Conditions: 150 mM KOAc, 10 mM MgCl2 and 150 mM bicine (pH 8.5), 24 C. Structure probing data (DMS) for a 177-nucleotide construct.

RNA sequence: GGGAACGACUCGAGUAGAGUCGAAAACGUGAGGGAAUCGGCCUUGAGGAGCUCGGAGAGGAGCGUGUGCCCGAAGAAGAGGUUCCUCGUGUAGUACCUGAAGAAUCUCCUCGCCCUGGAGAGGUGGGUUUUAGCGGGAGUUCGCUCCCGCUAAAACAAAAGAAACAACAACAACAAC
Reactivity to DMS in 0.01 (KOAc 150mM, MgCl2 10mM, bicine 150mM(pH8.5), 24C), signal-to-noise 1, nucleotides 027 to 126: c110g030u010g020a080g010g000g030a060a060u000c060g010g000c070c040u000u000g010a150g010g030a160g020c050u000c040g010g020a150g020a030g010g010a070g020c030g020u040g000u000g000c010c000c000g000a070a090g010a080a080g020a100g000g000u000u000c010c040u000c010g040u010g050u000a040g020u000a150c060c070u010g000a050a130g000a070a070u010c010u000c000c020u000c070g000c080c030c010u000g010g030a090g010a020g000g040u000g060g000
The DMS profile rests on 888 reads.